RNA sequence: GGGAACGACUCGAGUAGAGUCGAAAAUACAAAAAAGAGUGAUCUAGAUGUAAUGUUAGACAUUGAAUUGAGGAAAUUUGUAGACAAGCCUGAAAAGUACACGUACAAUCCUUUGUUAGGUGGAAGACAGUAGCUGGGAAUUCGUUCCCAGCUACUGAAAAGAAACAACAACAACAAC
Reactivity to DMS in 0.01 (KOAc 150mM, MgCl2 10mM, bicine 150mM(pH8.5), 24C), signal-to-noise 1, nucleotides 027 to 126: u010a070c060a010a020a080a090a110a090g000a130g010u000g020a100u010c010u010a050g010a080u000g000u030a040a020u000g000u000u000a040g010a070c010a000u000u000g000a100a090u010u000g000a090g010g000a050a090a060u000u000u000g000u000a070g040a100c100a040a080g000c030c030u020g000a040a070a080a090g020u000a030c080a010c130g000u000a040c150a050a050u010c110c070u010u000u000g000u000u000a020g000g000u020g010g000a090a140g020a100

This 177-nucleotide RNA was probed chemically with DMS. It was measured as part of the RMDB library OK2TRN. The DMS profile rests on 901 reads.